[RMDB]
Chemical mapping of a 207-nucleotide RNA with DMS and 2A3. Reactivities are given for positions 27 through 156. The RNA was probed in 150 mM KOAc, 10 mM MgCl2 and 150 mM bicine (pH 8.5) at 24 C. The data come from the RNA Mapping Database (RMDB), library M2RFPK.
RNA sequence: GGGAACGACUCGAGUAGAGUCGAAAAGAUCGGAAACAGCAGCAGGUGAGUCCGCCUUAUGUGAAGGAUCGGCUGGAACACGAGGAAAUACUGAGCCAACGCAAGACGGUAGCCGAACAGUAGCAACAAAACGCUUACGUGUUCGCACGUAAGCGAACUUUAAUCAUUUGUUCGCAAAUGAUUAAAGAAAAGAAACAACAACAACAAC
Reactivity to DMS in 0.01 (KOAc 150mM, MgCl2 10mM, bicine 150mM(pH8.5), 24C), signal-to-noise 4, nucleotides 027 to 156: g020a080u000c040g020g010a140a080a070c050a100g030c030a080g010c080a090g000g040u000g010a130g020u000c040c040g030c020c020u010u000a060u000g020u000g010a130a130g010g010a060u000c050g040g000c030u010g010g000a100a090c040a090c080g010a120g010g020a050a060a090u000a050c050u000g010a140g000c020c010a030a110c030g010c060a070a090g020a140c030g010g020u000a080g010c000c030g020a070a080c030a050g030u000a070g000c040a070a120c070a050a030a070a110c020g030c000u000u000a010c010g030u000g020u000u010c300g030c000a010c000g000u000a010a020g010c000g020a010a030
Reactivity to 2A3 in 0.01 (KOAc 150mM, MgCl2 10mM, bicine 150mM(pH8.5), 24C), signal-to-noise 9, nucleotides 027 to 156: g030a040u090c050g030g010a060a060a040c030a050g070c020a010g010c010a020g000g040u040g050a060g040u030c030c030g020c020c010u150u110a140u150g100u060g070a060a030g040g010a050u090c060g030g000c030u050g020g020a060a020c040a010c080g020a040g010g080a060a050a030u130a090c040u050g020a020g020c020c020a030a020c050g010c040a040a040g030a020c030g010g030u050a010g020c020c010g010a020a010c020a030g060u100a020g020c030a010a060c010a060a120a020a020c010g000c000u000u000a000c000g000u010g020u030u050c120g020c050a000c000g000u000a000a000g000c000g000a000a000